[RMDB]
RNA sequence: GGGAACGACUCGAGUAGAGUCGAAAAGCUCUGGAAUUGAGGCCUCUCUAACAAUAAUCCAAAACUACUUCGCAGAGUAAUCUGCCGAAUCGUAGGAUGCCCAUUACUAUCUAUUUUUGGAGCAUCUAAAACUGUCAGUGCUUCGGCACUGACAGAACCUAUGGGUCACGUUCGCGUGACCCAUAGGAAAAGAAACAACAACAACAAC
Reactivity to 2A3 in 0.01 (KOAc 150mM, MgCl2 10mM, bicine 150mM(pH8.5), 24C), signal-to-noise 1, nucleotides 027 to 156: g000c010u020c020u020g020g040a080a070u080u030g010a040g040g020c030c010u000c000u000c050u080a140a050c050a070a110u190a030a060u090c020c030a040a090a060a030c010u020a000c010u010u020c000g000c010a000g000a020g020u070a070a130u000c000u000g010c010c130g050a020a030u140c050g020u020a030g020g000a000u010g020c000c000c000a050u080u060a060c040u040a110u180c010u020a280u100u130u000u010u060g010g020a090g040c000a000u000c020u070a000a040a040a230c000u000g000u000c010a020g000u000g020c000u010u040c190g060g020c000a000c000u030g000a000c000a000g000a000a010